[RMDB]
RNA sequence: GGGAACGACUCGAGUAGAGUCGAAAAGCACAAACACUUGCUGUACGCGCCGCAGUUACGGGUUGUACAAGCGGAAAGAGAUUGCGUCUUGUCGAUGGAACAGCAAUCAGUGCGCCCGGGGGCGGCACUGUUCGUGGUGAUUCGUCACCACGAACAGAAAAGAAACAACAACAACAAC
Reactivity to 2A3 in 0.01 (KOAc 150mM, MgCl2 10mM, bicine 150mM(pH8.5), 24C), signal-to-noise 3, nucleotides 027 to 126: g010c020a010c040a070a180a000c050a060c120u070u120g010c020u010g030u070a020c030g010c010g040c040c010g000c010a020g000u050u120a060c020g000g000g040u130u300g030u100a010c030a060a040g070c080g080g100a060a090a010g100a000g000a000u030u040g000c010g040u030c030u080u100g140u110c100g140a120u130g040g000a060a030c010a040g000c000a000a010u010c020a000g010u010g000c010g010c010c000c000g010g000g000g010g010c030g000g000c010a020
Reactivity to DMS in 0.01 (KOAc 150mM, MgCl2 10mM, bicine 150mM(pH8.5), 24C), signal-to-noise 5, nucleotides 027 to 126: g020c040a060c090a120a100a130c170a080c140u000u000g010c020u000g010u000a060c050g000c080g010c010c020g020c050a130g020u000u020a110c030g000g000g000u000u010g050u000a020c020a060a060g020c070g010g010a070a080a120g010a120g000a070u000u000g010c020g000u000c030u000u010g000u010c160g000a070u000g000g000a030a040c060a100g000c010a020a020u010c030a100g010u000g000c000g000c010c000c000g020g000g000g000g010c050g000g010c060a060
Source: RMDB library OK2TST, as collected in RNAgym. The record gives the reactivity of an RNA of 177 nucleotides to 2A3 and DMS. The 2A3 profile rests on 4,641 reads. Conditions: 150 mM KOAc, 10 mM MgCl2 and 150 mM bicine (pH 8.5), 24 C.